[RMDB]
RNA sequence: GGGAACGACUCGAGUAGAGUCGAAAAUUUAUGCACCGAGCGCGCCAUCGGGAACAUGGAUUCAUGCUCGCCCUGGUCACAGCGGCCACCUAGCUGUUCGACUACUGCGGGGCUCGCGACUAAUGCCGUAUGUCCAUUCGUUCGCGAAUGGACAUACAAAAGAAACAACAACAACAAC
Reactivity to 2A3 in 0.01 (KOAc 150mM, MgCl2 10mM, bicine 150mM(pH8.5), 24C), signal-to-noise 1, nucleotides 027 to 126: u000u000u020a060u060g020c000a050c050c000g030a100g030c010g010c000g000c000c060a090u070c010g000g000g050a020a040c020a010u050g070g030a120u210u170c020a010u130g040c010u020c040g040c020c040c030u010g000g020u030c030a020c000a060g000c020g000g060c030c000a070c010c020u040a030g040c000u080g100u100u140c090g050a020c010u070a020c030u170g080c050g000g000g030g000c040u030c040g070c030g000a020c030u140a050a040u150g140c030c020
Reactivity to DMS in 0.01 (KOAc 150mM, MgCl2 10mM, bicine 150mM(pH8.5), 24C), signal-to-noise 1, nucleotides 027 to 126: u000u000u010a020u000g020c050a250c110c040g000a020g010c060g020c130g030c000c060a070u000c040g000g000g010a060a090c000a030u010g020g000a110u000u000c090a080u000g000c010u000c060g010c000c030c040u030g000g000u000c040a050c030a080g030c060g030g030c040c080a040c090c010u010a090g010c060u010g010u000u000c110g010a020c020u010a040c090u000g030c040g000g050g020g000c110u000c050g000c000g030a110c060u000a050a050u000g010c090c140
Structure probing data (2A3 and DMS) for a 177-nucleotide construct. The 2A3 profile rests on 1,190 reads. The reactions ran in a buffer of 150 mM KOAc, 10 mM MgCl2 and 150 mM bicine (pH 8.5), at 24 C.